[RMDB]
RNA sequence: GGGAACGACUCGAGUAGAGUCGAAAAGAAUGCAAUAUCAGUGGCGGCAGCGCAAAAUCGUAUACGCGGUCGACCUUUUUGGCGAUUUCGAUCUGGUCACGAUAGUAGCUGUGAAUUUCGACAAGAAACUAGGCAUGGGUUUCGACCCAUGCCUAGUAAAAGAAACAACAACAACAAC
Reactivity to DMS in 0.01 (KOAc 150mM, MgCl2 10mM, bicine 150mM(pH8.5), 24C), signal-to-noise 1, nucleotides 027 to 126: g000a080a080u000g000c000a200a050u060a060u000c000a210g000u000g000g000c020g000g020c090a020g000c070g000c130a020a030a060a110u000c040g000u000a090u000a060c060g010c040g000g040u000c000g010a080c090c000u000u030u070u060u000g020g000c020g000a100u000u000u060c040g050a050u100c000u040g000g000u010c070a020c000g040a010u000a110g000u020a060g040c030u020g000u010g000a050a070u000u010u010c000g010a110c090a000a190g000a130a070
Reactivity to 2A3 in 0.01 (KOAc 150mM, MgCl2 10mM, bicine 150mM(pH8.5), 24C), signal-to-noise 2, nucleotides 027 to 126: g110a000a120u210g020c070a030a040u050a130u170c040a050g070u060g040g040c010g000g050c000a040g000c000g000c060a050a020a000a050u030c040g030u070a040u030a110c090g030c060g090g020u060c010g110a300c000c000u130u130u030u120u060g100g000c030g000a020u010u040u000c010g060a200u000c020u040g040g030u120c000a000c050g000a010u030a070g010u090a020g010c040u030g020u060g050a050a060u020u040u040c000g030a030c000a050a110g050a090a110

An RNA of 177 nucleotides, treated with DMS and 2A3 and read out base by base. The 2A3 profile rests on 1,057 reads. For DMS, 1,466 sequencing reads were counted. Reactivities are given for positions 27 through 126. The RNA was probed in 150 mM KOAc, 10 mM MgCl2 and 150 mM bicine (pH 8.5) at 24 C.